[RMDB]
RNA sequence: GGGAACGACUCGAGUAGAGUCGAAAAACUAAUCCAAAGCAAGUAUAGGAGAACAGGUUUUUAACUAUUUUUAGGCAGAUAAAAAAUAGUAUUUGACAGUCUAACAUUAACUGAACAAUAAGUGUUAAAAAGUCGUCUCUGUUCGCAGAGACGACAAGUUCCACUUUCUGUUCGCAGAAAGUGGAACAAAAGAAACAACAACAACAAC
Reactivity to 2A3 in 0.01 (KOAc 150mM, MgCl2 10mM, bicine 150mM(pH8.5), 24C), signal-to-noise 2, nucleotides 027 to 156: a000c040u090a060a040u050c010c010a050a040a020g010c020a020a040g020u080a040u100a130g020g020a010g020a070a080c060a140g120g000u080u000u000u000u060a030a010c000u000a020u010u020u000u000u000a030g050g030c040a040g080a230u110a080a070a030a000a000a000u010a000g000u000a030u010u030u000g020a010c000a000g020u000c010u030a000a000c010a000u020u050a020a010c020u000g040a040a010c000a050a030u050a060a040g030u000g020u030u040a040a120a030a110a040g000u000c020g010u020c000u010c000u010g040u070u000c140g010c080a000g000a000g000a010c000g000a000c000a010a000

The record gives the reactivity of an RNA of 207 nucleotides to 2A3. For 2A3, 1,208 sequencing reads were counted.